[RMDB]
RNA sequence: GGGAACGACUCGAGUAGAGUCGAAAAGUCUCCAGCCACGUGGUGGAGCGCGUCAGCCUCGAAGCCGUACUGGUACUGCUUAAUGUGGCCCAAAUUACAUUCAGGGACGAAAACCGUCUUGCGCUUGACGCCGUGUUUUUCCAAAAGGUUACAUAGGACCACAAAUAUCAUUCGUGAUAUUUGUGGUAAAAGAAACAACAACAACAAC
Reactivity to DMS in 0.01 (KOAc 150mM, MgCl2 10mM, bicine 150mM(pH8.5), 24C), signal-to-noise 4, nucleotides 027 to 156: g020u000c010u000c000c040a150g020c050c030a110c090g070u020g010g030u000g010g000a090g030c040g020c040g000u010c040a130g000c040c020u010c070g010a100a140g020c040c050g000u000a100c070u000g020g010u000a050c040u000g010c040u000u000a070a090u000g040u000g020g000c080c020c030a040a070a120u000u000a070c070a150u000u000c060a180g010g020g010a080c020g010a090a080a090a100c080c020g030u000c050u010u000g010c060g030c030u000u000g020a200c050g030c020c050g010u010g010u000u000u000u000u010c020c020a060a080a110a080g010g020u000u000a050c070a100u000a170g010g010
Reactivity to 2A3 in 0.01 (KOAc 150mM, MgCl2 10mM, bicine 150mM(pH8.5), 24C), signal-to-noise 7, nucleotides 027 to 156: g040u010c020u000c040c010a090g090c040c020a140c160g120u250g010g040u030g020g020a010g000c050g010c000g030u040c040a030g010c020c020u040c060g060a070a010g010c030c020g060u120a100c080u110g060g020u040a040c010u030g090c000u060u100a070a030u130g020u040g050g000c000c050c010a070a130a080u190u130a040c030a030u030u100c040a050g050g020g010a010c030g050a070a050a030a060c060c010g010u010c000u050u120g030c080g010c010u060u120g020a030c030g010c030c040g000u050g050u050u060u000u040u030c020c000a070a070a030a060g050g030u090u060a040c060a070u200a110g090g060